[RMDB]
RNA sequence: GGGAACGACUCGAGUAGAGUCGAAAAGUUUGGCCAAGCUAUGUGCAAAUAUCACAAAUUAAAAAUUUGGUUAAGCAGUUAGGCUGGACCUAAUAUUUUAGAAAAACCUAAUUUUUUUUGUGGACCCUGCUCAACUAUCUUUCGAGAUAGUUGAGCAAAAAGAAACAACAACAACAAC
Reactivity to 2A3 in 0.01 (KOAc 150mM, MgCl2 10mM, bicine 150mM(pH8.5), 24C), signal-to-noise 3, nucleotides 027 to 126: g030u030u020u040g070g000c020c020a080a020g070c070u200a080u180g090u090g040c020a040a060a030u110a030u090c010a010c000a010a040a010u120u160a020a060a030a020a020u010u000u010g000g010u010u000a130a040g100c070a040g070u010u030a030g030g000c060u110g210g040a140c000c000u000a000a020u020a040u060u140u080u120a050g040a020a120a020a010a010c020c010u010a020a000u030u000u000u000u030u000u000u010g010u000g010g010a020c000c000c010
Reactivity to DMS in 0.01 (KOAc 150mM, MgCl2 10mM, bicine 150mM(pH8.5), 24C), signal-to-noise 1, nucleotides 027 to 126: g000u030u000u010g000g030c020c030a050a100g010c230u020a140u010g010u020g010c060a010a030a050u010a070u010c000a010c010a000a020a020u000u030a000a040a000a010a000u010u000u000g020g010u000u000a030a110g000c150a150g020u000u000a000g000g010c040u000g000g010a270c000c000u000a000a020u010a060u010u040u040u060a120g040a120a100a110a050a010c010c030u030a010a010u000u000u000u000u000u000u000u000g000u000g010g020a070c010c000c010